This 177-nucleotide RNA was probed chemically with 2A3 and DMS. The 2A3 profile rests on 4,445 reads.

[RMDB]
RNA sequence: GGGAACGACUCGAGUAGAGUCGAAAAGAUAUGGAAUCGCGCAACAGCUACCACUCGGAAACGAGUGUGUAGACAUGCACGAUUCCUAAGUCAAACUCAUAGACCUAGUUCGCUAGGUCUAUGAGAAUCUAGGAUGUGAGUUCGCUCACAUCCUAGAAAAAGAAACAACAACAACAAC
Reactivity to 2A3 in 0.01 (KOAc 150mM, MgCl2 10mM, bicine 150mM(pH8.5), 24C), signal-to-noise 2, nucleotides 027 to 126: g000a000u000a020u080g020g000a020a000u000c000g000c000g000c010a040a050c060a290g040c030u020a000c000c010a000c000u000c010g000g030a070a000a000c020g010a000g030u010g000u030g010u000a000g090a090c060a030u010g000c000a010c010g000a000u000u000c000c000u010a030a010g030u000c030a040a040a120c000u010c010a010u000a000g000a000c000c000u010a010g030u040u080c260g010c200u000a000g000g050u020c000u000a000u000g010a000g000a000a000
Reactivity to DMS in 0.01 (KOAc 150mM, MgCl2 10mM, bicine 150mM(pH8.5), 24C), signal-to-noise 3, nucleotides 027 to 126: g000a000u000a270u030g000g000a010a010u000c000g020c050g000c000a010a100c300a200g010c000u000a000c000c000a010c000u000c000g000g000a060a050a110c000g000a030g010u010g010u010g060u000a000g000a090c090a110u000g000c000a020c010g000a000u000u010c000c000u010a010a040g010u010c030a100a110a230c000u000c010a000u000a000g000a010c000c000u000a010g000u000u000c220g000c010u020a000g010g000u000c000u000a000u020g010a010g000a030a040
The DMS profile rests on 2,708 reads. Values are in units of 0.01, from 0 to 300, in steps of 10. Source: RMDB library TTRDEL, as collected in RNAgym.